[RMDB]
RNA sequence: GGGAACGACUCGAGUAGAGUCGAAAAGACGUAAUCCGCGCAAAUCCACAAACGCCAACGAUGAGCGUUUCGCUGUAGCCGCUCAAGGCAACAGCCGGGGCCGCCUGAGCCCUGUUACCAAAGACGGGAAACUCGAUGCCAUUCGUGGCAUCGAGAACGAUGCGUAAAGGUUCGCCUUUACGCAUCGAAAAGAAACAACAACAACAAC
Reactivity to 2A3 in 0.01 (KOAc 150mM, MgCl2 10mM, bicine 150mM(pH8.5), 24C), signal-to-noise 4, nucleotides 027 to 156: g050a000c030g020u040a050a080u050c040c030g010c010g020c080a080a100a090u080c070c030a090c070a120a040a010c040g010c030c020a120a050c110g210a200u160g040a070g050c020g010u020u060u060c040g000c000u000g010u040a030g000c000c010g030c090u190c220a070a070g010g000c010a030a020c010a010g000c000c010g000g000g000g000c000c030g050c000c020u040g000a010g010c010c000c000u010g040u060u090a020c020c000a000a020a010g080a030c020g020g000g020a040a050a030c000u000c000g000a000u000g000c000c000a010u060u070c220g060u090g000g000c000a000u000c000g000a000g000a000a000
Reactivity to DMS in 0.01 (KOAc 150mM, MgCl2 10mM, bicine 150mM(pH8.5), 24C), signal-to-noise 1, nucleotides 027 to 156: g000a090c050g070u010a150a130u010c030c050g010c000g060c010a080a040a040u010c030c030a050c100a020a280a020c010g030c010c010a100a090c100g010a100u010g000a120g030c030g020u000u000u010c080g040c040u000g060u000a090g030c020c010g020c130u000c110a190a160g010g010c000a050a030c000a070g000c000c010g030g000g040g020c000c010g010c090c050u000g010a180g010c010c010c040u000g010u000u010a080c130c070a050a060a080g010a100c090g030g010g000a120a110a240c030u010c020g010a010u000g010c000c000a140u000u000c240g010u030g020g020c020a000u000c000g000a010g000a000a010